[RMDB]
RNA sequence: GGGAACGACUCGAGUAGAGUCGAAAACCUGGAGAGGUCUUCUGCCCUAGCCCGGUCUUCGAAGCUUCCUUUGGCUACUACCCGGUGGAAACAACUGAAGCUUCAACGCCUUUUUUUCCAAUCUUCUUUAGCACCGGGCUAGGGAGUAAGCCCGUGGCACUUUUAACUAGUUCGCUAGUUAAAAGUGAAAAGAAACAACAACAACAAC
Reactivity to 2A3 in 0.01 (KOAc 150mM, MgCl2 10mM, bicine 150mM(pH8.5), 24C), signal-to-noise 2, nucleotides 027 to 156: c000c000u070g030g120a250g000a010g030g030u070c030u030u010c010u180g300c000c000c000u020a010g000c040c000c010g000g010u010c070u190u100c170g010a000a000g000c000u000u000c000c000u030u040u030g040g060c040u040a020c000u090a110c040c060c080g000g000u010g000g060a300a260a150c000a030a030c030u010g000a000a000g000c020u000u000c010a070a070c060g130c000c000u090u120u050u060u020u150u110c160c030a220a290u130c090u190u090c010u180u300u120a060g000c090a000c000c020g000g020g020c000u000a000g000g000g000a000g000u010a000a010g000c000c020c010g010u080g100g040
The record gives the reactivity of an RNA of 207 nucleotides to 2A3.
It was measured as part of the RMDB library VIROID.
For 2A3, 721 sequencing reads were counted.
The reactions ran in a buffer of 150 mM KOAc, 10 mM MgCl2 and 150 mM bicine (pH 8.5), at 24 C.